[RMDB]
RNA sequence: GGGAACGACUCGAGUAGAGUCGAAAACUGAGGCCAUUUUUGUAAAGUGAUGGCUGAGACUCUUUGGUCAAACUGCUCAGGAAGACAAAAGUACUAGUAAGAAUUUUUCAGUAGGGACCUAGUGCACGGAUCUAGGAAAGUUCGCUUUCCUAGAUCCAAAAGAAACAACAACAACAAC
Reactivity to 2A3 in 0.01 (KOAc 150mM, MgCl2 10mM, bicine 150mM(pH8.5), 24C), signal-to-noise 1, nucleotides 027 to 126: c010u010g060a020g030g010c030c010a030u010u040u100u180u180g170u110a220a100a080g020u070g050a000u010g000g000c020u010g010a000g000a010c000u020c000u240u070u220g000g000u010c000a000a180a140c080u050g050c020u020c070a030g000g040a070a030g040a040c050a020a250a010a040g030u040a060c020u030a010g100u080a050a150g040a200a190u000u090u080u140u040c030a000g000u040a030g080g040g000a000c000c000u000a030g010u000g090c010a010c110
Reactivity to DMS in 0.01 (KOAc 150mM, MgCl2 10mM, bicine 150mM(pH8.5), 24C), signal-to-noise 2, nucleotides 027 to 126: c040u000g000a210g000g010c020c010a030u000u010u000u030u030g030u010a090a140a120g030u000g000a030u000g010g000c010u000g000a230g000a100c040u000c150u000u000u010g010g000u000c020a070a150a180c060u000g000c060u000c070a060g000g010a090a080g010a050c120a040a080a090a090g000u000a060c090u000a030g000u010a090a100g020a080a080u000u000u010u000u010c060a040g020u000a050g010g000g010a070c220c010u020a010g000u000g000c090a080c230